[RMDB]
RNA sequence: GGGAACGACUCGAGUAGAGUCGAAAAAGAUGUGUCAAUCUUAGAACAGCAUGGGAAGAAAACUCAAAUUUAGAAGAGGAGGCUACUUGGAUUCAGUUCAAGAAACACAAAGCCCGCUACAGACUCCCGCGUAUCUCGAAUUCGUUCGAGAUACGCGAAAAGAAACAACAACAACAAC
Reactivity to 2A3 in 0.01 (KOAc 150mM, MgCl2 10mM, bicine 150mM(pH8.5), 24C), signal-to-noise 1, nucleotides 027 to 126: a000g130a170u150g000u000g010u000c010a070a000u000c070u070u050a150g000a000a000c020a000g080c010a060u180g030g090g040a040a180g120a070a240a040a000c030u000c010a060a180a300u130u260u160a240g030a210a110g040a040g090g010a020g210g000c000u030a020c000u000u040g000g090a120u300u000c050a000g020u010u000c000a000a000g000a080a290a000c000a000c060a050a000a000g000c000c000c000g000c020u010a010c000a020g170a190c060u060c000c050